[RMDB]
RNA sequence: GGGAACGACUCGAGUAGAGUCGAAAAGGCGAUAAUGGCGUUACCUACGGAAUGCGGACAAUUUCACACUGUCUAGUGUAACGUAGCAAUUCACAAACAGGAGUGUCGAAGUUGGCGCUCAACGGCCAGGUAAACUACCCUUCGGGGUAGUUUACCUAAAAGAAACAACAACAACAAC
Reactivity to DMS in 0.01 (KOAc 150mM, MgCl2 10mM, bicine 150mM(pH8.5), 24C), signal-to-noise 2, nucleotides 027 to 126: g000g000c010g000a050u030a100a070u000g000g020c080g030u000u000a100c180c050u000a130c060g000g000a120a040u000g000c000g000g000a060c010a010a100u000u000u030c090a130c160a190c060u000g000u020c030u020a080g030u000g000u020a010a070c020g050u000a130g000c240a100a180u020u090c000a000c080a070a190a120c180a030g000g000a030g000u000g020u000c140g020a010a070g000u010u000g000g000c010g070c030u030c140a040a090c180g000g020c010c020
Reactivity to 2A3 in 0.01 (KOAc 150mM, MgCl2 10mM, bicine 150mM(pH8.5), 24C), signal-to-noise 3, nucleotides 027 to 126: g050g030c020g050a060u040a080a150u140g020g030c060g020u030u050a140c010c020u010a030c030g060g050a070a070u090g010c000g030g000a070c060a060a120u110u110u070c070a070c040a040c050u010g020u150c040u030a260g030u000g030u010a000a030c040g000u020a010g060c030a020a050u140u040c040a040c010a090a140a010c010a110g090g000a050g010u000g020u080c050g030a080a090g060u060u070g020g000c020g010c020u000c040a000a060c000g060g010c010c000

The record gives the reactivity of an RNA of 177 nucleotides to DMS and 2A3. Source: RMDB library OK1LIB, as collected in RNAgym. For DMS, 1,998 sequencing reads were counted.